[RMDB]
RNA sequence: GGGAACGACUCGAGUAGAGUCGAAAAUGGCCUUGGUGGCAUGUCGCUUUGAGCAAAGCGUAAAAAGCUCAAAUUAAAAUUAAACGCAAACAACGUUAAAUUCGCUCCUGCUUAUGCUAAAGCUGCGUAAGUUCAGUUGAGCCUGAAUUUUAAGUGACCAAUUCCAUGUCUUCGGACAUGGAAUUGGAAAAGAAACAACAACAACAAC
Reactivity to 2A3 in 0.01 (KOAc 150mM, MgCl2 10mM, bicine 150mM(pH8.5), 24C), signal-to-noise 1, nucleotides 027 to 156: u120g090g060c050c010u130u130g230g010u230g060g000c000a010u060g000u040c000g020c000u010u000u040g020a010g000c080a030a130a100g000c010g280u300a050a060a000a080a080g010c030u000c010a030a000a020u010u010a000a030a000a040u130u200a140a100a030c070g040c140a030a220a000c080a040a040c040g010u050u070a030a170a030u010u020c010g000c000u030c000c000u000g000c000u000u000a000u000g000c000u010a200a000a150g020c110u070g000c080g000u000a000a000g000u130u250c000a000g010u050u100g010a000g000c000c030u140g040a020a010u040u000u070u110a110a020g000u010g130a010
The data come from the RNA Mapping Database (RMDB), library ARCHII. Structure probing data (2A3) for a 207-nucleotide construct. The 2A3 profile rests on 474 reads.